The record gives the reactivity of an RNA of 177 nucleotides to DMS and 2A3. For 2A3 the reverse transcriptase was SuperScript II with manganese. Conditions: 150 mM KOAc, 10 mM MgCl2 and 150 mM bicine (pH 8.5), 24 C. The DMS profile rests on 10,151 reads. The data come from the RNA Mapping Database (RMDB), library OK2TST.
RNA sequence: GGGAACGACUCGAGUAGAGUCGAAAAUAAGAAAGCCACAGGCUCGUUAGCAUCAUGUUCAAUGUCAAAUGGUAAAAUUGACCACGUACCAAUUCGUAGCUCUUGCUUUGCCUUAAUCGUGCAUAAGAAUGCUUCUGUUAUUCGUAACAGAAGCAUUAAAAGAAACAACAACAACAAC
Reactivity to DMS in 0.01 (KOAc 150mM, MgCl2 10mM, bicine 150mM(pH8.5), 24C), signal-to-noise 7, nucleotides 027 to 126: u010a070a100g000a090a080a090g010c010c060a060c120a090g010g010c040u000c060g020u000u000a070g010c040a060u010c050a050u010g010u000u000c080a070a070u010g000u000c080a040a050a120u000g000g010u000a040a050a070a080u010u010g010a060c030c060a070c140g020u000a160c060c030a030a110u000u000c080g010u000a060g010c030u000c040u000u000g000c040u000u000u000g000c020c020u000u000a050a060u000c120g010u000g030c090a070u000a070a100g010
Reactivity to 2A3 in 0.01 (KOAc 150mM, MgCl2 10mM, bicine 150mM(pH8.5), 24C), signal-to-noise 6, nucleotides 027 to 126: u220a040a030g110a090a040a000g020c010c010a060c020a050g050g000c010u030c050g050u030u050a020g000c010a040u080c010a020u140g050u090u080c050a050a050u070g050u020c020a050a040a140u100g060g020u140a090a100a080a090u040u070g030a020c020c000a020c050g010u020a030c000c020a030a060u050u070c040g030u040a010g010c030u020c020u050u050g030c010u060u050u050g020c020c000u050u070a070a040u110c080g050u110g050c030a030u040a170a040g120